[RMDB]
Notes
Chemical mapping of a 177-nucleotide RNA with DMS and 2A3.
RNA sequence: GGGAACGACUCGAGUAGAGUCGAAAACAUGCUUUAUCAUUCUGGAAGAGAGCAUACACCUUUAAGCACCUCAGUUAGCUUGUCAAGCCUCCAUCUAUUCCAAAUCCAUAAGAGGGUGCUCGGAUGGACGGCUUUAUCUAUUCGUAGAUAAAGCCGUAAAAGAAACAACAACAACAAC
Reactivity to DMS in 0.01 (KOAc 150mM, MgCl2 10mM, bicine 150mM(pH8.5), 24C), signal-to-noise 4, nucleotides 027 to 126: c140a070u000g010c030u010u000u010a060u010c050a120u010u000c120u010g000g030a150a140g010a100g010a020g040c020a040u000a130c100a110c020c030u000u000u000a090a040g040c030a050c010c030u000c080a100g010u010u010a040g020c050u000u000g000u010c070a070a070g010c020c020u000c020c020a030u010c030u000a120u000u010c040c040a040a080a100u000c020c040a060u020a070a100g010a100g000g020g010u000g010c050u000c080g000g000a040u000g000g010
Reactivity to 2A3 in 0.01 (KOAc 150mM, MgCl2 10mM, bicine 150mM(pH8.5), 24C), signal-to-noise 2, nucleotides 027 to 126: c010a010u040g000c000u130u130u060a080u130c030a080u190u190c130u170g080g050a120a000g020a050g000a010g040c020a000u040a030c090a060c000c010u070u070u070a040a010g060c010a040c030c040u090c050a070g080u100u140a050g070c060u060u110g080u160c000a040a020g010c000c040u080c010c000a050u060c000u050a110u130u020c010c010a030a030a110u010c060c030a010u090a220a030g030a070g050g070g000u060g030c000u030c020g020g020a020u030g000g000
For 2A3, 1,303 sequencing reads were counted. For 2A3 the reverse transcriptase was SuperScript II with manganese. The reactions ran in a buffer of 150 mM KOAc, 10 mM MgCl2 and 150 mM bicine (pH 8.5), at 24 C. For DMS, 3,192 sequencing reads were counted. It was measured as part of the RMDB library OK2TST.